[RMDB]
RNA sequence: GGGAACGACUCGAGUAGAGUCGAAAAAAUAAUUGGCGAAACUCGUUUCGCGUUGGCUGCCUAAUUCAAGGAAUUAGCGUGCCUUCAUGCUAAGGGUUUGUUAUCUGCUAAAACCCGGUGCAUUCAUAAGACUUUUGCUUGUUCGCAAGCAAAAGAACAAAAAUAGCUUGUUCGCAAGCUAUUUUUGAAAAGAAACAACAACAACAAC
Reactivity to DMS in 0.01 (KOAc 150mM, MgCl2 10mM, bicine 150mM(pH8.5), 24C), signal-to-noise 3, nucleotides 027 to 156: a110a080u000a090a100u000u000g020g000c000g030a110a080a020c030u010c080g010u000u000u000c020g020c030g030u000u000g000g000c020u000g040c120c010u000a010a050u000u000c030a150a180g030g000a050a030u000u000a000g010c030g000u000g010c010c020u000u000c070a040u000g010c020u010a300a260g000g000g010u000u000u000g010u000u000a130u010c140u000g010c120u000a090a020a030a040c000c000c010g010g010u000g000c020a060u000u000c070a120u010a090a150g000a110c010u000u000u000u000g010c000u010u010g000u000u000c300g010c030a020a020g010c010a000a000a010a000g010a080a150
Reactivity to 2A3 in 0.01 (KOAc 150mM, MgCl2 10mM, bicine 150mM(pH8.5), 24C), signal-to-noise 5, nucleotides 027 to 156: a010a010u260a010a070u070u070g030g000c000g030a040a040a040c030u030c070g050u000u010u010c020g000c000g010u020u010g010g000c020u070g030c030c020u000a010a010u010u020c140a240a120g160g030a050a020u000u000a010g020c040g050u020g000c020c000u000u030c020a010u010g000c010u030a030a040g000g020g000u010u030u000g040u040u120a210u150c160u230g050c040u120a020a050a020a010c000c000c000g020g010u020g000c010a010u030u090c040a040u070a200a070g070a150c010u020u000u000u010g000c000u000u010g010u070u090c170g010c090a000a000g000c000a000a000a000a000g000a020a010